The record gives the reactivity of an RNA of 177 nucleotides to 2A3 and DMS.
RNA sequence: GGGAACGACUCGAGUAGAGUCGAAAACCCGCCAGCGAUUUCGUCUGCGGCACGCAGCAGGUCGCUUCCGGCAUUACCGUACAGGUCUUUACCACCGGACGCGGCACGCCGUACGGGCUGAUGGCGGCAGCGUAUGGCCAUUCGUGGCCAUACGCUGAAAAGAAACAACAACAACAAC
Reactivity to 2A3 in 0.01 (KOAc 150mM, MgCl2 10mM, bicine 150mM(pH8.5), 24C), signal-to-noise 4, nucleotides 027 to 126: c000c000c010g020c010c010a020g010c010g120a060u080u110u200c080g090u050c050u060g030c020g070g020c060a040c140g110c040a080g010c000a020g080g040u000c010g020c000u000u030c010c010g030g000c020a000u010u110a050c000c010g050u120a140c090a210g000g050u060c050u120u200u150a100c040c020a030c030c010g020g010a060c030g000c020g060g000c020a010c040g000c000c000g010u090a120c080g040g010g000c050u100g020a040u030g040g010c000g000g000
Reactivity to DMS in 0.01 (KOAc 150mM, MgCl2 10mM, bicine 150mM(pH8.5), 24C), signal-to-noise 2, nucleotides 027 to 126: c030c000c000g030c130c070a010g020c050g000a040u000u000u010c150g000u030c120u000g000c000g000g030c090a080c190g000c060a070g000c080a110g000g040u000c030g010c000u000u050c060c010g020g030c290a100u000u010a080c020c010g020u030a130c190a120g000g000u010c130u020u020u020a110c110c130a260c010c060g010g000a060c050g020c000g030g000c000a060c190g000c040c000g100u000a160c020g000g000g000c050u010g060a080u000g000g000c030g040g000
The reactions ran in a buffer of 150 mM KOAc, 10 mM MgCl2 and 150 mM bicine (pH 8.5), at 24 C. The 2A3 profile rests on 3,221 reads. For 2A3 the reverse transcriptase was SuperScript II with manganese. The DMS profile rests on 2,044 reads.